Structure probing data (DMS and 2A3) for a 177-nucleotide construct. For DMS the reverse transcriptase was MarathonRT. The data come from the RNA Mapping Database (RMDB), library OK2TRN. 2A3 adducts were read by reverse transcription with SuperScript II with manganese. The 2A3 profile rests on 1,428 reads. Values cover nucleotides 27 to 126.
RNA sequence: GGGAACGACUCGAGUAGAGUCGAAAAGCUGAGGUGGGAGAAUCACUUGAGUCUAGGAGGUUGAGGCUUCUGUGAGCCGAGAUCAUGUCACUGCGCUCCAGCCUGGGUGACAAAGUGAAACCUUGUCCUCUUACACGUUCUUCGGAACGUGUAAGAGAAAAGAAACAACAACAACAAC
Reactivity to DMS in 0.01 (KOAc 150mM, MgCl2 10mM, bicine 150mM(pH8.5), 24C), signal-to-noise 2, nucleotides 027 to 126: g010c110u010g010a040g000g010u020g000g020g010a100g010a170a120u000c050a020c030u000u000g030a080g010u000c050u010a160g010g010a060g010g020u000u000g000a160g010g030c040u010u000c120u000g000u010g000a040g010c050c010g010a170g000a030u000c110a070u000g010u010c050a020c040u010g030c300g010c060u010c030c070a090g010c020c040u000g000g000g010u000g000a030c040a020a070a060g000u000g010a040a090a100c060c040u000u000g000u010c070
Reactivity to 2A3 in 0.01 (KOAc 150mM, MgCl2 10mM, bicine 150mM(pH8.5), 24C), signal-to-noise 1, nucleotides 027 to 126: g050c060u040g040a020g080g050u080g030g090g000a130g020a080a110u040c000a030c060u030u080g060a020g020u000c040u060a060g010g000a020g040g040u010u050g040a040g000g000c000u090u030c090u250g120u100g040a000g000c000c000g030a020g000a050u000c010a050u170g070u060c050a010c070u050g000c020g000c030u020c000c010a010g000c030c040u060g050g000g000u030g020a020c050a040a100a010g030u000g020a020a060a040c020c000u040u060g080u080c020